[RMDB]
RNA sequence: GGGAACGACUCGAGUAGAGUCGAAAAACGAAACCCAAGGUGCAUGCCGAGGUGCGGUAGGCCUCGUUAACGAACCGCAAAAAAAUAGUCGCAAACGACGAAAACUACGCACUCGCAGCUUAAUAACAGUAGGGUCCCUACUUCGGUAGGGACCCAAGUAAUCAUCGAACUUCGGUUCGAUGAUUACAAAAGAAACAACAACAACAAC
Reactivity to 2A3 in 0.01 (KOAc 150mM, MgCl2 10mM, bicine 150mM(pH8.5), 24C), signal-to-noise 1, nucleotides 027 to 156: a000c040g000a100a000a000c000c000c010a010a000g130g000u050g010c070a150u090g020c060c080g040a050g000g080u050g000c000g190g030u090a000g060g000c000c020u000c000g020u000u100a110a110c150g020a030a060c050c020g000c040a070a000a000a000a000a090a060u240a040g110u130c010g000c100a050a110a050c030g060a000c000g030a010a010a010a010c000u000a020c000g000c040a000c000u000c020g030c000a020g000c020u040u140a190a020u270a210a150c100a100g100u160a160g010g000g000u010c000c000c000u000a000c000u020u090c260g010g010u000a000g000g000g050a000c000c000c000a000a000
Conditions: 150 mM KOAc, 10 mM MgCl2 and 150 mM bicine (pH 8.5), 24 C.
This 207-nucleotide RNA was probed chemically with 2A3.
It was measured as part of the RMDB library M2RFPK.